[RMDB]
RNA sequence: GGGAACGACUCGAGUAGAGUCGAAAAUAAUUACUGAAGCAAGUAAUUUUGGGGAUUAUCUCUUCCUGCAGAAGAAGCUGUGGGAUCUGACAAUCAAUGUGUCCAUGAAAGUCCUCAGCUUAAGAAAACUUAUACGCUGAUUCGUCAGCGUAUAAGUAAAAGAAACAACAACAACAAC
Reactivity to DMS in 0.01 (KOAc 150mM, MgCl2 10mM, bicine 150mM(pH8.5), 24C), signal-to-noise 5, nucleotides 027 to 126: u020a090a030u000u000a020c000u000g000a200a190g010c150a110a030g010u000a020a020u000u000u000u000g020g010g000g000a120u000u000a080u010c020u000c030u010u000c000c010u000g010c120a090g000a160a170g010a060a070g010c010u000g000u010g020g010g010a020u000c060u010g020a040c030a030a090u010c240a090a110u010g010u010g010u000c030c140a120u020g000a090a110a130g010u000c000c000u000c040a020g000c020u010u000a070a120g000a100a040a070
Reactivity to 2A3 in 0.01 (KOAc 150mM, MgCl2 10mM, bicine 150mM(pH8.5), 24C), signal-to-noise 3, nucleotides 027 to 126: u060a000a020u030u010a010c010u030g090a170a060g150c080a060a000g080u020a020a020u030u050u070u080g030g000g000g000a030u210u060a120u240c040u000c000u020u020c000c000u040g000c040a050g030a290a010g070a030a010g030c000u010g050u100g040g020g010a020u010c030u020g000a010c000a010a040u130c050a100a150u280g020u020g000u080c000c030a110u180g040a180a070a010g030u010c000c000u010c000a020g000c010u050u040a070a020g060a030a080a010
Annotation: This 177-nucleotide RNA was probed chemically with DMS and 2A3. DMS (dimethyl sulfate) methylates the pairing face of unpaired adenines and cytosines. For DMS the reverse transcriptase was MarathonRT. Values are in units of 0.01, from 0 to 300, in steps of 10. Conditions: 150 mM KOAc, 10 mM MgCl2 and 150 mM bicine (pH 8.5), 24 C. 2A3 adducts were read by reverse transcription with SuperScript II with manganese. The data come from the RNA Mapping Database (RMDB), library OK2TRN.